[RMDB]
RNA sequence: GGGAACGACUCGAGUAGAGUCGAAAAUCAAGAACAAAGGGAUAAAACUGCUAAUAAGUAUGCAUCUUUAGCUCUAGCAGUUAGCCAAGAAAAUAAAGUAGAGUUAACACUUCAAGCUAAAGGCUAUGAGGAUGCAGUUUGUCUUAUAGGAGACAAAGAUUAUGGCGUGGUUCGCCACGCCAUAAUCAAAAGAAACAACAACAACAAC
Reactivity to 2A3 in 0.01 (KOAc 150mM, MgCl2 10mM, bicine 150mM(pH8.5), 24C), signal-to-noise 2, nucleotides 027 to 156: u050c010a040a040g060a040a110c080a080a030a080g060g010g000a030u100a160a110a000a000c010u010g000c000u050a060a050u060a170a050g040u050a040u250g070c010a130u070c000u000u000u040a000g020c010u010c030u020a020g010c140a070g000u030u000a000g010c020c010a060a010g160a030a110a030a020u190a110a120a010g030u150a000g030a030g060u010u050a020a000c000a000c050u110u050c090a060a010g010c000u010a030a010a010g040g000c010u010a020u100g050a020g140g000a030u060g010c000a000g000u020u030u010g050u020c020u020u070a140u200a120g120g030a030g000a020c050a040a060a040